RNA sequence: GGGAACGACUCGAGUAGAGUCGAAAAAUGAGGCAACAACUGCAGUACUUGUGGGGAAGGCACAAGUAGGACACCAACAUUACCUGCAAGCAAGACGCAAAAUUAAUAGAACAUCACCAUACUUGUGAAUUCGAGCAAGAUUCGUCUUGCUCGAAUUAAAAGAAACAACAACAACAAC
Reactivity to DMS in 0.01 (KOAc 150mM, MgCl2 10mM, bicine 150mM(pH8.5), 24C), signal-to-noise 3, nucleotides 027 to 126: a050u030g010a060g000g000c050a060a060c060a070a130c130u000g020c060a070g050u000a080c040u010u020g020u000g000g010g010g010a110a090g050g010c000a000c030a010a010g020u000a040g000g010a160c160a070c030c040a060a050c110a090u010u000a060c050c030u000g000c040a020a030g020c100a000a050g000a100c060g010c050a040a030a070a110u040u000a120a060u020a110g030a080a090c090a060u030c030a070c010c040a120u020a030c100u000u000g000u000g030
Reactivity to 2A3 in 0.01 (KOAc 150mM, MgCl2 10mM, bicine 150mM(pH8.5), 24C), signal-to-noise 6, nucleotides 027 to 126: a000u130g020a060g040g000c020a050a030c000a030a030c100u050g000c030a040g020u050a030c010u020u020g000u020g010g050g030g060a060a030g080g000c020a000c010a030a000g010u020a010g040g040a010c020a030c040c030a060a050c010a060u060u090a080c010c000u000g010c020a030a030g020c020a000a050g050a040c030g000c010a020a090a030a090u170u100a070a080u120a100g050a060a030c040a070u070c020a020c050c010a050u090a140c030u100u090g010u020g150
An RNA of 177 nucleotides, treated with DMS and 2A3 and read out base by base. For 2A3 the reverse transcriptase was SuperScript II with manganese. Values cover nucleotides 27 to 126. For DMS the reverse transcriptase was MarathonRT. The data come from the RNA Mapping Database (RMDB), libraries RFM100 and RFMREP.